[RMDB]
RNA sequence: GGGAACGACUCGAGUAGAGUCGAAAAGAUAUGGAUCGCAUGGGAGACUCUCGGAAACGAGGGAGGUCGACGAUCAUGGCGAUCCUAAGUCAAAAGAAUCCGAUGCAGUUCGCUGCAUCGGAUUCAACACCCACUAUAGCUUCGGCUAUAGUGGGUGAAAAGAAACAACAACAACAAC
Reactivity to DMS in 0.01 (KOAc 150mM, MgCl2 10mM, bicine 150mM(pH8.5), 24C), signal-to-noise 2, nucleotides 027 to 126: g020a050u000a300u010g000g010a010u000c000g010c010a000u000g040g000g000a080g000a020c000u000c000u000c000g000g000a120a110a220c010g020a010g010g020g020a180g010g010u000c020g000a070c230g000a030u010c000a000u000g000g030c000g010a000u010c000c000u010a020a090g010u000c070a100a060a140a110g000a000a000u000c000c000g000a000u000g000c000a010g010u000u030c230g010c030u030g000c000a010u000c010g000g020a000u000u000c000a080a240
Reactivity to 2A3 in 0.01 (KOAc 150mM, MgCl2 10mM, bicine 150mM(pH8.5), 24C), signal-to-noise 2, nucleotides 027 to 126: g030a020u090a030u120g000g000a000u000c000g030c000a000u020g000g040g000a010g010a020c010u050c000u020c270g000g050a120a100a110c050g040a020g170g300g080a120g230g040u030c020g110a300c010g000a010u040c000a000u050g250g170c010g000a000u000c000c000u000a030a010g020u000c050a000a010a050a250g000a000a000u000c000c000g000a000u000g000c000a000g110u180u210c230g090c230u040g000c000a000u000c000g000g000a000u000u000c000a000a000